[RMDB]
RNA sequence: GGGAACGACUCGAGUAGAGUCGAAAACUAAUGGGUUGCCACCCACAACCAUUGCUUUAGCACUUUUACUUCAAAUCAAUGAAGGAUUGAUAAAAGUUCUCCUGGUGUCUCCGCAGAGUGCCUUCCAGGAACAGAUCUUUGCAUAGAAUAUCAGUGACUUUUACUCGUGAUUCGUCACGAGUAAAAGAAAAGAAACAACAACAACAAC
Reactivity to DMS in 0.01 (KOAc 150mM, MgCl2 10mM, bicine 150mM(pH8.5), 24C), signal-to-noise 2, nucleotides 027 to 156: c040u010a150a150u000g010g000g000u000u000g010c070c070a270c180c090c120a240c050a000a030c050c030a160u000u000g000c030u010u000u000a140g040c160a150c030u000u000u000u040a110c030u010u000c050a070a050a170u000c300a170a130u000g010a100a060g000g000a130u000u000g010a120u010a020a050a050a050g000u010u000c000u000c050c010u010g010g010u000g000u000c080u000c050c120g000c090a070g000a050g010u020g020c070c040u000u010c030c030a160g020g010a040a130c040a110g000a110u000c030u000u000u000g030c060a100u010a100g010a080a090u000a060u000c030a030g020u000g000a170
Reactivity to 2A3 in 0.01 (KOAc 150mM, MgCl2 10mM, bicine 150mM(pH8.5), 24C), signal-to-noise 5, nucleotides 027 to 156: c080u130a090a110u140g110g000g030u010u030g030c040c030a060c010c020c000a000c010a000a010c000c020a090u040u190g030c050u080u110u190a070g020c040a050c030u000u040u060u110a110c020u040u040c030a070a070a210u060c040a030a220u070g030a050a050g040g020a010u010u120g020a030u060a050a070a020a030g010u030u010c010u010c020c000u010g000g000u000g030u020c020u000c020c060g100c110a040g060a030g050u040g030c020c000u110u150c040c030a010g000g040a020a020c020a020g090a030u020c000u020u060u100g010c030a040u070a150g100a180a040u050a030u120c040a020g040u020g150a080